An RNA of 177 nucleotides, treated with 2A3 and DMS and read out base by base. It was measured as part of the RMDB libraries RFM100 and RFMREP. For DMS the reverse transcriptase was MarathonRT. Values cover nucleotides 27 to 126.
RNA sequence: GGGAACGACUCGAGUAGAGUCGAAAAAGACAAAGCUUUUCGGAGCGGAGGAUAUGGAACGCGGCUUCGAGCGAGAUCGUGAAACUUCGCCGUCGGGCGAAGGGAAGCGAAGGUUCGACUGGAAGCCAAGAAGCAUACAUUUCGAUGUAUGCUUCUUAAAAGAAACAACAACAACAAC
Reactivity to 2A3 in 0.01 (KOAc 150mM, MgCl2 10mM, bicine 150mM(pH8.5), 24C), signal-to-noise 9, nucleotides 027 to 126: a000g070a020c060a020a040a010g040c010u070u050u050u120c170g110g000a020g000c030g030g010a040g020g030a050u080a090u220g100g060a110a020c060g010c040g120g000c010u020u030c050g070a010g000c000g000a010g010a040u030c000g000u000g000a030a000a010c000u000u000c000g010c030c030g210u300c290g110g020g000c010g000a000a000g000g010g010a010a010g000c010g030a030a020g130g090u060u010c020g100a160c180u030g050g000a000a000g000c000c000
Reactivity to DMS in 0.01 (KOAc 150mM, MgCl2 10mM, bicine 150mM(pH8.5), 24C), signal-to-noise 9, nucleotides 027 to 126: a080g010a110c070a040a270a170g000c040u000u000u000u030c140g020g010a030g010c000g000g010a300g000g010a110u010a050u010g000g020a090a070c100g010c130g000g000c000u000u000c000g000a030g010c000g010a030g010a060u000c000g010u010g000a020a300a170c000u000u000c010g010c000c000g010u040c300g010g010g010c000g010a020a000g000g010g010a300a200g000c010g000a010a060g010g020u010u000c000g000a080c010u000g000g000a000a000g000c000c010